[RMDB]
RNA sequence: GGGAACGACUCGAGUAGAGUCGAAAACAAAAGCCUCUGCGUUGGCCAUCAAAUGCAGGAGGCAUUGAUGGACUGCAUUUGAUUAAAUUAGUGUGCAUUUGAGUUGAAAACGCUUCGGCAAUAAUGGAUUUAAAUGAUGAUUCGUCAUCAUUUAAAUAAAAGAAACAACAACAACAAC
Reactivity to DMS in 0.01 (KOAc 150mM, MgCl2 10mM, bicine 150mM(pH8.5), 24C), signal-to-noise 8, nucleotides 027 to 126: c060a080a130a130a150g010c010c010u000c070u010g000c040g010u000u000g010g020c050c090a050u000c000a000a000a010u000g010c000a030g010g000a120g010g020c040a040u030u010g010a100u020g000g010a230c040u000g000c010a020u010u000u010g000a030u020u020a050a080a090u020u030a060g020u010g020u010g000c040a060u010u000u020g000a160g000u010u010g000a080a060a060a050c100g010c030u000u000c160g010g000c020a050a060u030a050a060u030g000g010
Reactivity to 2A3 in 0.01 (KOAc 150mM, MgCl2 10mM, bicine 150mM(pH8.5), 24C), signal-to-noise 9, nucleotides 027 to 126: c020a000a120a010a020g020c010c010u040c050u050g020c020g040u050u060g070g010c020c010a010u010c000a010a030a020u010g010c010a030g050g120a070g160g000c020a010u020u090g030a020u040g020g060a030c010u010g000c020a010u030u030u050g060a060u030u140a040a090a040u110u110a070g090u060g050u060g130c060a080u050u080u190g150a160g050u060u130g110a100a090a010a010c040g020c000u050u040c070g050g000c050a010a020u160a090a070u120g140g030
Source: RMDB library OK1LIB, as collected in RNAgym. An RNA of 177 nucleotides, treated with DMS and 2A3 and read out base by base. DMS adducts were read by reverse transcription with MarathonRT. The reactions ran in a buffer of 150 mM KOAc, 10 mM MgCl2 and 150 mM bicine (pH 8.5), at 24 C. 2A3 adducts were read by reverse transcription with SuperScript II with manganese. Reactivities are rounded to 0.1 and cut off at 0 and 3.